[RMDB]
RNA sequence: GGGAACGACUCGAGUAGAGUCGAAAAGUAUGGAGCUAGCGAUUUUAUAGUCGGUGCACGAGCUGUAGUACGACAUGUUUUUUUUCAUGCGCCGACAUAUACAGCUCGUACGCUAGCGAACAUACGAGGGUUGCUGUUCCUUCGGGAGCAGCAACCCAAAAGAAACAACAACAACAAC
Reactivity to 2A3 in 0.01 (KOAc 150mM, MgCl2 10mM, bicine 150mM(pH8.5), 24C), signal-to-noise 1, nucleotides 027 to 126: g010u000a020u000g040g000a010g000c000u000a010g000c000g160a110u000u190u230u090a180u090a020g210u170c300g110g200u210g000c100a010c000g000a000g000c000u000g000u000a000g000u000a020c000g060a030c000a000u000g000u040u040u040u040u070u040u040u040c000a000u010g000c000g040c000c000g020a010c000a000u060a000u000a010c000a020g000c000u000c010g000u000a030c000g000c000u010a000g000c060g000a190a000c000a000u000a000c000g000a090
Chemical mapping of a 177-nucleotide RNA with 2A3. The RNA was probed in 150 mM KOAc, 10 mM MgCl2 and 150 mM bicine (pH 8.5) at 24 C. The data come from the RNA Mapping Database (RMDB), library OK1LIB. Reactivities are given for positions 27 through 126. 2A3 adducts were read by reverse transcription with SuperScript II with manganese. For 2A3, 694 sequencing reads were counted.